RNA sequence: GGGAACGACUCGAGUAGAGUCGAAAAGUGACUUCGGUCACGGAGGGACCUUUGUGCUUAGCAGCCAUAUGGAGCGUAUACGGACCCAUUGGGUCCGGAUAUACGCUAUGAAGUAUGGCGGGCUAAGCACUCUGGUAUGAUAUGGGUUCGCCCAUAAAAUCGUUCCCUAAUUCGUUAGGGAACGAUUAAAAGAAACAACAACAACAAC
Reactivity to 2A3 in 0.01 (KOAc 150mM, MgCl2 10mM, bicine 150mM(pH8.5), 24C), signal-to-noise 3, nucleotides 027 to 156: g000u010g010a010c020u040u180c300g060g000u010c010a010c020g000g030a120g020g070g050a010c010c010u010u000u000g010u000g010c000u000u000a000g020c000a000g010c000c000a010u030a030u020g020g040a030g000c060g000u000a000u010a030c010g000g000a000c000c010c080a180u260u300g000g000g000u000c000c000g000g000a010u010a000u000a000c000g010c000u050a130u040g010a020a000g000u000a000u000g000g000c000g020g110g010c000u000a000a000g000c000a000c010u000c000u000g000g000u050a070u180g150a100u020a030u030g000g000g030u060u080c190g100c000c000c010a010u020a000a130
Reactivity to DMS in 0.01 (KOAc 150mM, MgCl2 10mM, bicine 150mM(pH8.5), 24C), signal-to-noise 2, nucleotides 027 to 156: g000u000g010a020c000u000u010c250g040g030u000c020a010c030g010g020a130g000g000g070a040c000c010u000u000u010g010u000g000c000u000u000a050g020c010a120g000c000c010a020u000a010u000g000g010a010g030c000g020u010a010u000a010c010g010g010a010c000c000c010a300u000u010g100g010g020u000c000c000g030g010a010u000a010u010a000c000g030c010u000a030u010g020a170a300g000u000a020u000g000g000c000g010g010g030c000u000a000a030g010c000a000c000u000c010u000g010g020u000a060u010g010a230u000a090u000g010g010g010u000u020c090g010c000c000c000a010u000a020a070

The record gives the reactivity of an RNA of 207 nucleotides to 2A3 and DMS. The RNA was probed in 150 mM KOAc, 10 mM MgCl2 and 150 mM bicine (pH 8.5) at 24 C. The DMS profile rests on 5,814 reads. It was measured as part of the RMDB library RNAMAK. Reactivities are given for positions 27 through 156.